[RMDB]
RNA sequence: GGGAACGACUCGAGUAGAGUCGAAAAGGCUGGAAUCGGGAAUCCUGAGCGCUGGCAAGUCCAGUAAGAAGGAUGAGCCGGAAGUGGUAGAGAAUGUGCAGUUCACUGAAGAAGUGUCUGAACCAUCUCAGGCUGAAGUCGAGGAUGCCCUCGAUCACUGUGAAGAAUUCUUCGGAAUUCUUCACAGAAAAGAAACAACAACAACAAC
Reactivity to DMS in 0.01 (KOAc 150mM, MgCl2 10mM, bicine 150mM(pH8.5), 24C), signal-to-noise 1, nucleotides 027 to 156: g000g030c030u000g000g040a030a120u020c000g070g040g010a200a030u000c000c000u000g010a220g040c230g040c040u000g000g020c000a040a300g020u000c000c030a040g020u000a020a100g000a300a100g000g000a050u000g010a300g020c000c050g020g010a090a050g040u000g000g000u000a080g000a080g000a080a180u000g010u000g050c030a030g030u000u000c020a100c010u000g010a120a100g000a100a040g080u000g020u000c000u020g010a120a070c000c120a150u010c040u000c030a100g010g010c010u030g020a140a120g020u000c010g010a080g030g010a080u010g010c120c030c000u000c000g000a070u010c030a130
Reactivity to 2A3 in 0.01 (KOAc 150mM, MgCl2 10mM, bicine 150mM(pH8.5), 24C), signal-to-noise 1, nucleotides 027 to 156: g070g010c080u070g080g060a110a100u120c070g020g040g000a010a070u030c010c010u000g050a070g080c080g000c070u000g000g000c060a140a060g060u010c020c020a000g030u020a020a110g090a030a020g010g000a010u020g020a040g030c030c000g000g020a060a030g030u060g020g130u070a030g000a000g000a030a040u090g020u060g060c010a010g000u060u070c010a010c030u040g040a080a020g160a030a000g060u040g020u040c010u020g000a050a040c000c010a070u020c010u010c030a020g070g000c000u040g020a090a010g030u030c020g030a000g010g030a180u150g060c090c000c000u000c000g000a050u090c010a030
Chemical mapping of a 207-nucleotide RNA with DMS and 2A3. Reactivities are given for positions 27 through 156. It was measured as part of the RMDB library OK3TST. DMS adducts were read by reverse transcription with MarathonRT. Reactivities are rounded to 0.1 and cut off at 0 and 3. For 2A3, 695 sequencing reads were counted. The reactions ran in a buffer of 150 mM KOAc, 10 mM MgCl2 and 150 mM bicine (pH 8.5), at 24 C. 2A3 adducts were read by reverse transcription with SuperScript II with manganese.